Description
Chemical mapping of a 207-nucleotide RNA with 2A3 and DMS. The RNA was probed in 150 mM KOAc, 10 mM MgCl2 and 150 mM bicine (pH 8.5) at 24 C. The data come from the RNA Mapping Database (RMDB), library OK3TST.
RNA sequence: GGGAACGACUCGAGUAGAGUCGAAAAAGCAAGGGUUAUUUUCAGAUGGUAAAAUCUUGGAUAUUCGUGGCGUCGACAUUGUUACUUGCAAGAAUCUCCAGCCCAACGAUACACCCGUGAUUGUGGUGAGCUGUCGUGCCCAGGAAGUACACUUGUACAUUGAUCUAUGGUUCGCCAUAGAUCAAUGAAAAGAAACAACAACAACAAC
Reactivity to 2A3 in 0.01 (KOAc 150mM, MgCl2 10mM, bicine 150mM(pH8.5), 24C), signal-to-noise 6, nucleotides 027 to 156: a000g080c050a040a030g060g000g010u090u060a110u040u080u050u070c040a030g020a070u050g060g070u220a070a090a020a040u040c040u030u080g040g020a030u040a100u070u070c050g050u080g060g000c020g040u070c030g030a040c030a080u040u130g040u110u110a090c040u030u050g040c020a040a040g030a030a050u010c020u000c050c010a020g000c020c020c000a010a010c020g020a010u020a080c010a030c020c020c020g020u070g100a150u130u120g030u110g070g020u040g020a040g020c050u040g030u040c020g010u060g000c000c000c010a030g030g040a040a020g010u040a030c080a020c040u040u020g030u050a030
Reactivity to DMS in 0.01 (KOAc 150mM, MgCl2 10mM, bicine 150mM(pH8.5), 24C), signal-to-noise 4, nucleotides 027 to 156: a110g000c040a060a060g000g020g030u000u010a050u000u000u000u000c040a100g020a100u010g030g030u000a100a070a080a050u010c040u000u010g030g030a090u000a080u000u000c060g020u010g010g000c050g030u000c010g020a070c070a110u000u010g020u000u000a100c100u000u000g000c030a080a120g000a050a090u000c040u000c020c040a150g000c030c010c030a120a070c030g030a130u000a120c040a030c010c010c030g010u000g000a140u000u010g000u000g010g010u000g000a090g030c070u000g010u000c020g040u000g000c010c020c040a180g010g000a040a070g010u000a060c050a080c050u020u000g020u010a170